[RMDB]
RNA sequence: GGGAACGACUCGAGUAGAGUCGAAAACUCCAGGUCCAGCUCGUCGUACGGAUGAUACCGAAACAGGGAGUACACUUGCUCCCGAACCUUAUCGCUAAUCCCAAAGUAAAUAAUGGGAUUAACGACUGCGCGAAGGUACACCGCAGUCGCCGAACCCACGUGCUGAUCGAUUCGUCGAUCAGCACGUAAAAGAAACAACAACAACAAC
Reactivity to 2A3 in 0.01 (KOAc 150mM, MgCl2 10mM, bicine 150mM(pH8.5), 24C), signal-to-noise 1, nucleotides 027 to 156: c060u060c030c000a000g000g060u060c000c090a080g020c050u040c040g140u010c010g040u030a020c050g000g000a010u040g030a060u080a090c050c000g050a040a010a090c040a090g070g050g000a020g070u030a020c130a030c050u090u150g010c020u000c000c000c000g030a010a010c000c010u040u040a020u060c010g000c090u040a020a020u000c010c000c000a090a090a030g110u210a090a130a000u260a040a110u170g060g000g000a000u110u110a000a000c000g110a000c030u060g010c070g000c010g150a110a050g010g040u030a040c040a020c010c000g000c020a040g060u000c020g000c010c010g040a070a070c010c000c050
Chemical mapping of a 207-nucleotide RNA with 2A3. The 2A3 profile rests on 574 reads. Conditions: 150 mM KOAc, 10 mM MgCl2 and 150 mM bicine (pH 8.5), 24 C.